RNA sequence: GGGAACGACUCGAGUAGAGUCGAAAACUCCAGAGCCAUAAUUAGAGCAAACUAAUUGAAGUUGUGUUUUGACACACUUUCCAAAUUCACGGGUGCCGGAUGACAUAUUCACAACACUGCUGCUGCAGCGUAGAGAAUGCUUCGGCAUUCUCUACGCAAAAGAAACAACAACAACAAC
Reactivity to 2A3 in 0.01 (KOAc 150mM, MgCl2 10mM, bicine 150mM(pH8.5), 24C), signal-to-noise 5, nucleotides 027 to 126: c020u000c000c000a030g030a010g070c040c020a130u070a130a090u060u020a050g010a060g150c070a060a080a090c020u020a000a040u040u100g100a070a010g040u100u100g000u020g040u010u080u110u250g140a020c010a000c010a010c030u030u060u010c030c020a080a060a110u120u060c060a010c080g020g000g000u040g000c020c000g050g010a050u060g040a010c020a030u110a030u080u110c050a030c020a060a020c040a000c050u040g010c010u010g030c010u070g010c050a030
Reactivity to DMS in 0.01 (KOAc 150mM, MgCl2 10mM, bicine 150mM(pH8.5), 24C), signal-to-noise 2, nucleotides 027 to 126: c040u010c000c050a110g010a100g020c060c100a110u000a040a040u000u000a070g020a130g000c050a130a090a120c050u000a040a050u000u000g000a060a130g000u000u050g000u000g030u000u000u120u040g000a080c020a060c000a000c020u000u000u040c040c040a090a090a040u010u020c130a070c120g010g020g010u010g030c010c090g000g030a050u020g000a050c100a040u010a090u030u000c020a050c090a060a040c120a080c070u000g000c030u000g030c060u010g010c070a090